[RMDB]
An RNA of 177 nucleotides, treated with DMS and read out base by base. The data come from the RNA Mapping Database (RMDB), library TTRDEL. Values cover nucleotides 27 to 126.
RNA sequence: GGGAACGACUCGAGUAGAGUCGAAAAGAUAUGGAGUUACUUCGAUAAGGAGCAAUCGGAAACGAUUGGCUCCUUUUGACGAAGGGCUCCUAAGUCAAACAGUUAGGUGCUUCGGCACCUAACUGAAUCGAACAUGGAACUUCGGUUCCAUGUUCGAAAAAGAAACAACAACAACAAC
Reactivity to DMS in 0.01 (KOAc 150mM, MgCl2 10mM, bicine 150mM(pH8.5), 24C), signal-to-noise 1, nucleotides 027 to 126: g010a020u000a300u010g010g000a000g000u020u010a120c000u010u020c010g010a210u000a060a010g000g000a000g010c010a020a000u000c000g020g000a150a060a130c020g000a020u000u000g040g050c020u000c000c000u000u000u000u000g010a190c110g010a000a020g000g000g000c000u000c000c000u010a020a130g000u000c030a140a090a220c010a010g010u010u000a000g000g040u000g000c000u000u010c210g050g000c000a000c000c000u010a010a020c000u000g010a070a060